This 207-nucleotide RNA was probed chemically with DMS and 2A3. The RNA was probed in 150 mM KOAc, 10 mM MgCl2 and 150 mM bicine (pH 8.5) at 24 C.

RNA sequence: GGGAACGACUCGAGUAGAGUCGAAAAAAUUGGGUUAAAACGGUGGGGGACGAUCCCGUAACAUCCGUCCUAACGGCGACAGACUGCACGGCCCUGCCUCCUAGGUGUGUUCAAUGAACAGUCGUUCUGGCCCCUAAGGCGUUCGCGCCUUAGGGAACCGUAUUGACAAUUUCGAUUGUCAAUACGGAAAAGAAACAACAACAACAAC
Reactivity to DMS in 0.01 (KOAc 150mM, MgCl2 10mM, bicine 150mM(pH8.5), 24C), signal-to-noise 1, nucleotides 027 to 156: a080a100u010u010g000g010g030u010u000a010a110a040a080c070g020g020u010g010g040g030g000g000a080c030g000a070u000c010c000c030g090u000a120a060c020a110u000c020c000g000u000c010c010u000a070a080c150g010g010c020g000a170c050a090g000a110c030u010g000c160a120c040g000g010c030c010c000u000g040c060c020u000c050c040u010a080g020g020u000g000u000g000u000u020c070a080a080u000g000a070a060c040a020g010u000c030g010u000u010c010u010g000g000c060c000c000c000u000a010a000g020g030c010g060u010u000c140g010c010g000c000c000u000u000a010g020g010g010a010a000
Reactivity to 2A3 in 0.01 (KOAc 150mM, MgCl2 10mM, bicine 150mM(pH8.5), 24C), signal-to-noise 2, nucleotides 027 to 156: a000a040u130u100g010g010g010u050u060a090a020a000a000c060g010g040u070g020g020g020g010g000a000c050g030a080u120c020c010c000g030u020a040a010c040a150u070c010c010g020u030c010c010u100a150a050c060g070g020c030g010a020c010a040g080a040c040u030g010c050a020c020g000g020c020c000c000u020g040c020c040u060c020c030u050a040g020g010u050g020u020g020u100u060c120a200a160u180g050a080a000c010a020g020u010c010g000u030u000c010u030g150g000c000c000c030c000u000a000a000g000g000c000g010u030u000c100g010c010g000c100c000u000u010a000g000g010g000a000a000